[RMDB]
RNA sequence: GGGAACGACUCGAGUAGAGUCGAAAAGGAGAGGAAGUGACCACUACUGAUGAGAAUCUAGUCACAUCUACAGUAGCACAAUUGGAGGAAGGAAGCGGUAUUACUGCUGCGGAAUCAAAGGAUGAAACACCAUCCGUACUUUCGAGUACGGAUGGUGAAAAGAAACAACAACAACAAC
Reactivity to DMS in 0.01 (KOAc 150mM, MgCl2 10mM, bicine 150mM(pH8.5), 24C), signal-to-noise 3, nucleotides 027 to 126: g010g000a060g040a040g010g020a080a120g030u020g020a120c120c060a140c010u000a040c070u000g020a200u000g000a100g000a070a110u000c080u020a190g000u000c120a090c130a060u000c010u000a190c040a020g000u000a020g030c110a050c160a080a070u010u000g010g010a030g010g040a030a010g020g010a080a010g010c050g030g010u000a090u020u020a120c080u000g000c020u010g010c090g000g010a050a050u020c110a030a070a080g000g000a070u000g000a090a050a130
Reactivity to 2A3 in 0.01 (KOAc 150mM, MgCl2 10mM, bicine 150mM(pH8.5), 24C), signal-to-noise 1, nucleotides 027 to 126: g000g030a080g000a000g010g010a060a000g040u060g040a050c000c030a030c010u080a010c020u000g000a080u090g000a040g000a060a060u090c050u150a030g160u070c080a020c000a110u000c020u060a040c020a030g000u000a000g000c030a000c020a110a100u110u090g050g000a020g040g000a000a100g040g040a040a010g060c020g090g010u020a120u170u160a070c030u020g010c010u020g000c030g000g030a020a080u050c060a080a000a040g050g030a090u140g060a090a110a000

An RNA of 177 nucleotides, treated with DMS and 2A3 and read out base by base.
Values cover nucleotides 27 to 126.
2A3 adducts were read by reverse transcription with SuperScript II with manganese.
The reactions ran in a buffer of 150 mM KOAc, 10 mM MgCl2 and 150 mM bicine (pH 8.5), at 24 C.
It was measured as part of the RMDB library OK2TRN.
High 2A3 reactivity points to a flexible backbone, as in loops and unpaired stretches.